This 207-nucleotide RNA was probed chemically with 2A3 and DMS. The RNA was probed in 150 mM KOAc, 10 mM MgCl2 and 150 mM bicine (pH 8.5) at 24 C. For DMS the reverse transcriptase was MarathonRT. 2A3 adducts were read by reverse transcription with SuperScript II with manganese. The data come from the RNA Mapping Database (RMDB), library OK3TST.
RNA sequence: GGGAACGACUCGAGUAGAGUCGAAAAUGGACUGCCACUUGCCGACGCGUCAGCCGACGUGGGCACCAUUCGUGACAUUGAGGAGUUGAUGUCAACGCGAGGAAAACGGGCAGCCGCAAAGAGCUCUCGCGUGCCGAACGGCUGCUGGCAAGUUCUCACGUAUAUCUGGGUUCGCCCAGAUAUACGUAAAAGAAACAACAACAACAAC
Reactivity to 2A3 in 0.01 (KOAc 150mM, MgCl2 10mM, bicine 150mM(pH8.5), 24C), signal-to-noise 4, nucleotides 027 to 156: u100g010g010a040c060u040g020c010c000a020c020u020u100g000c010c000g070a090c040g020c000g040u030c010a100g150c110c130g020a040c050g020u090g030g040g010c000a010c010c010a090u110u100c010g030u030g010a010c000a000u030u040g050a080g160g070a190g200u090u080g080a010u010g010u010c040a080a100c060g020c020g040a040g020g080a040a070a120a110c080g000g050g000c070a000g020c010c000g040c030a140a200a020g090a040g020c000u020c000u020c050g010c010g020u010g010c000c040g080a140a110c000g000g000c010u010g010c050u030g000g000c030a040a040g010u000u020c030u020c030
Reactivity to DMS in 0.01 (KOAc 150mM, MgCl2 10mM, bicine 150mM(pH8.5), 24C), signal-to-noise 1, nucleotides 027 to 156: u000g000g010a140c080u000g000c000c020a080c080u000u000g060c000c000g000a090c010g050c210g000u000c060a100g010c050c030g040a050c010g020u000g000g020g050c000a220c020c050a080u010u010c040g020u000g010a030c000a030u000u000g010a050g060g040a200g010u000u000g000a050u010g000u000c010a080a140c030g030c010g000a300g000g000a030a040a160a030c030g000g020g000c050a060g030c000c000g000c030a100a090a230g000a170g000c060u010c020u000c040g030c050g020u000g010c060c010g030a160a050c080g020g040c050u000g000c020u010g000g000c030a060a210g000u010u000c020u030c040